[RMDB]
RNA sequence: GGGAACGACUCGAGUAGAGUCGAAAAGUCAGUCAACUAGCAGGACCCGGAAAAGCUAGUGACUGACAAACCGGGUCCGGCUCAGAAAAUAAAGUAUCCGAUAAGGAUACAAAAGAAAAGUGAGCAAAUGGAUUAAUCAGUUCGCUGAUUAAUCCAUAAAAGAAACAACAACAACAAC
Reactivity to 2A3 in 0.01 (KOAc 150mM, MgCl2 10mM, bicine 150mM(pH8.5), 24C), signal-to-noise 5, nucleotides 027 to 126: g000u000c000a000g000u000c030a060a040c100u010a000g010c050a060g030g120a100c020c040c060g050g020a180a190a020a000g000c010u010a000g000u000g030a010c000u000g000a000c010a040a010a000c010c000g030g000g070u020c040c060g050g000c000u000c000a030g160a080a100a030a020u190a030a090a030g000u000a000u000c000c010g040a060u110a300a040g000g010a010u000a000c000a000a060a000a000g070a010a050a010a010g130u020g000a010g020c000a000a040
Reactivity to DMS in 0.01 (KOAc 150mM, MgCl2 10mM, bicine 150mM(pH8.5), 24C), signal-to-noise 3, nucleotides 027 to 126: g020u000c000a010g000u000c020a040a070c000u010a000g020c010a130g010g010a120c090c070c070g000g030a180a080a180a170g000c020u010a010g010u000g020a040c000u000g000a000c010a020a040a130c040c000g000g000g030u020c080c070g010g000c020u000c020a040g000a080a050a050a080u020a070a170a120g010u000a000u000c000c000g000a140u060a120a130g010g000a010u000a010c000a010a040a080a130g010a100a090a070a120g040u010g000a010g000c010a090a100
An RNA of 177 nucleotides, treated with 2A3 and DMS and read out base by base. For DMS the reverse transcriptase was MarathonRT. For 2A3 the reverse transcriptase was SuperScript II with manganese. It was measured as part of the RMDB library OK1LIB. The 2A3 profile rests on 3,731 reads. Conditions: 150 mM KOAc, 10 mM MgCl2 and 150 mM bicine (pH 8.5), 24 C. 2A3 is a SHAPE reagent: it acylates the 2'-hydroxyl of flexible nucleotides of all four kinds.